Chemical mapping of a 177-nucleotide RNA with DMS and 2A3.
RNA sequence: GGGAACGACUCGAGUAGAGUCGAAAAGAUUAUUGGCCGCGGCUCUAAUCUUCGCGAGCGAGACGCGGAUCCUCUUUCUCAUGCAGAAAUUCUUGCGAUUAGGCAGGCGGCAGUAUCUCGCAAGUCAAUAAUCAUCCCUGUUCGCAGGGAUGAUUAUAAAAGAAACAACAACAACAAC
Reactivity to DMS in 0.01 (KOAc 150mM, MgCl2 10mM, bicine 150mM(pH8.5), 24C), signal-to-noise 2, nucleotides 027 to 126: g000a070u000u010a040u010u020g010g010c000c010g020c000g020g010c010u000c080u000a040a090u010c020u020u010c100g020c060g010a070g020c240g000a020g010a040c020g020c050g020g000a080u000c050c030u000c050u010u000u000c040u000c020a170u020g000c130a040g010a060a080a110u020u000c040u000u000g010c040g000a080u000u000a040g000g010c030a050g000g010c070g020g010c040a050g000u000a040u000c070u000c040g020c070a130a100g000u010c130a050
Reactivity to 2A3 in 0.01 (KOAc 150mM, MgCl2 10mM, bicine 150mM(pH8.5), 24C), signal-to-noise 1, nucleotides 027 to 126: g000a000u130u140a050u160u190g100g000c000c030g040c010g070g000c010u000c010u200a130a050u030c100u220u110c070g040c060g030a040g000c000g030a000g010a010c000g020c010g090g000a010u030c000c000u080c000u000u060u000c010u010c020a070u300g000c040a040g090a170a150a110u170u050c060u060u100g020c010g020a020u030u120a020g030g040c070a030g110g000c050g000g000c000a050g020u050a050u020c040u020c000g040c000a000a010g070u030c010a000
The reactions ran in a buffer of 150 mM KOAc, 10 mM MgCl2 and 150 mM bicine (pH 8.5), at 24 C.